[RMDB]
RNA sequence: GGGAACGACUCGAGUAGAGUCGAAAAGAUAUGGAUCUGCUCCCCACCCAUACCGCUCAUCGAUCUCGGAAACGAGGGAGAGCCGUAUGGAGGCAGAUCCUAAGUCAAACUAGGCUUCGGCCUAGAAGUAAGAAUGGUUGUUCGCAACCAUUCUUACAAAAGAAACAACAACAACAAC
Reactivity to 2A3 in 0.01 (KOAc 150mM, MgCl2 10mM, bicine 150mM(pH8.5), 24C), signal-to-noise 3, nucleotides 027 to 126: g080a050u220a150u270g010g000a000u000c000u020g040c010u190c050c050c000c000a030c000c000c000a000u000a000c010c020g020c000u000c020a290u300c090g050a060u020c020u000c010g050g000a090a060a030c010g000a000g000g010g000a070g000a000g000c000c010g000u010a000u000g000g000a010g020g030c000a000g000a000u000c000c000u020a040a030g090u060c100a040a120a180c010u010a000g010g020c000u080u100c300g120g000c030c000u000a010g010a010a010
Reactivity to DMS in 0.01 (KOAc 150mM, MgCl2 10mM, bicine 150mM(pH8.5), 24C), signal-to-noise 3, nucleotides 027 to 126: g010a060u010a190u010g000g000a000u000c000u000g030c020u000c160c020c000c020a300c090c000c000a020u000a000c000c300g000c000u010c010a190u000c140g010a060u000c000u000c000g000g000a080a070a130c010g010a000g000g010g000a040g010a010g020c000c220g000u010a010u000g000g000a060g010g000c000a000g000a000u000c000c000u000a020a080g010u000c070a090a080a170c000u000a000g000g000c000u010u030c120g000g030c000c000u000a010g000a020a110
The data come from the RNA Mapping Database (RMDB), library TTRDEL. An RNA of 177 nucleotides, treated with 2A3 and DMS and read out base by base. Reactivities are rounded to 0.1 and cut off at 0 and 3. Reactivities are given for positions 27 through 126. The 2A3 profile rests on 5,641 reads. For DMS the reverse transcriptase was MarathonRT. For 2A3 the reverse transcriptase was SuperScript II with manganese. The RNA was probed in 150 mM KOAc, 10 mM MgCl2 and 150 mM bicine (pH 8.5) at 24 C.